Conditions: 150 mM KOAc, 10 mM MgCl2 and 150 mM bicine (pH 8.5), 24 C. Chemical mapping of a 177-nucleotide RNA with 2A3 and DMS. The DMS profile rests on 1,136 reads. For DMS the reverse transcriptase was MarathonRT.

[RMDB]
RNA sequence: GGGAACGACUCGAGUAGAGUCGAAAAAGCGGCAUCGCCGAGAUCGUUGGCAACGAAGACGGCAAGGUAUCAGAGGUGGUGCUGGUAGAUGACACGCGUCUGCCUUGCGAUCUGCUGAUCUUGGGCACAUCCCGCUCAUCUUCGGAUGAGCGGGAUGAAAAGAAACAACAACAACAAC
Reactivity to 2A3 in 0.01 (KOAc 150mM, MgCl2 10mM, bicine 150mM(pH8.5), 24C), signal-to-noise 1, nucleotides 027 to 126: a000g070c000g070g010c020a080u000c100g020c000c000g010a010g050a050u010c050g130u050u090g080g080c030a050a060c030g170a080a010g200a040c030g020g060c010a000a050g030g010u100a010u220c010a000g030a000g100g070u130g050g000u040g000c040u010g000g000u020a040g000a070u080g050a030c000a010c150g080c010g060u000c020u000g000c000c000u040u050g080c110g050a100u000c010u100g060c020u070g020a060u020c000u020u010g010g000g000c050a010
Reactivity to DMS in 0.01 (KOAc 150mM, MgCl2 10mM, bicine 150mM(pH8.5), 24C), signal-to-noise 1, nucleotides 027 to 126: a080g030c040g030g000c050a120u000c090g020c030c000g010a190g000a050u000c010g020u030u010g000g010c040a120a060c170g000a170a110g040a040c140g000g000c010a120a040g000g030u000a030u000c050a100g010a210g010g020u000g000g050u030g000c020u000g000g000u020a020g000a100u000g000a160c030a060c100g000c050g020u000c000u000g000c050c010u000u000g010c060g020a030u010c010u000g000c080u000g000a040u000c020u000u010g010g000g000c060a170